The data come from the RNA Mapping Database (RMDB), library OK2TRN. Structure probing data (2A3 and DMS) for a 177-nucleotide construct. The reactions ran in a buffer of 150 mM KOAc, 10 mM MgCl2 and 150 mM bicine (pH 8.5), at 24 C. DMS adducts were read by reverse transcription with MarathonRT. For 2A3 the reverse transcriptase was SuperScript II with manganese. For 2A3, 2,931 sequencing reads were counted.
RNA sequence: GGGAACGACUCGAGUAGAGUCGAAAAUACGUACGUACGUAGCGCGUCGAUCUGAUCGUCGGCCGUACGGCCGUACGGUACGGCGCGUACUGCGCGUGAGCGCGUGCGCACUGAGGCCUGACGACGAGUCCAACUCGGGAUUCGUCCCGAGUUGGACAAAAGAAACAACAACAACAAC
Reactivity to 2A3 in 0.01 (KOAc 150mM, MgCl2 10mM, bicine 150mM(pH8.5), 24C), signal-to-noise 2, nucleotides 027 to 126: u140a030c030g010u030a000c020g020u000a000c000g020u030a070g170c070g060c140g070u010c000g020a070u000c100u220g070a130u100c090g010u000c010g020g000c010c000g070u030a030c030g000g000c010c010g020u030a010c010g000g000u040a040c010g040g020c010g010c010g000u010a000c030u050g000c030g000c010g040u120g110a110g020c010g030c010g010u020g000c010g030c000a010c020u050g070a060g050g090c000c030u040g090a020c040g000a020c000g030a020
Reactivity to DMS in 0.01 (KOAc 150mM, MgCl2 10mM, bicine 150mM(pH8.5), 24C), signal-to-noise 2, nucleotides 027 to 126: u010a060c040g000u000a020c010g020u010a030c020g000u000a030g010c010g030c170g020u000c010g000a010u000c100u020g010a090u010c270g010u000c000g010g010c020c000g020u000a020c060g000g010c050c030g000u010a000c010g020g010u010a110c040g000g010c000g050c000g040u000a010c010u000g090c000g010c010g010u010g000a170g000c010g020c030g000u000g000c010g020c000a010c020u000g000a210g010g020c020c010u020g000a060c080g000a060c040g000a070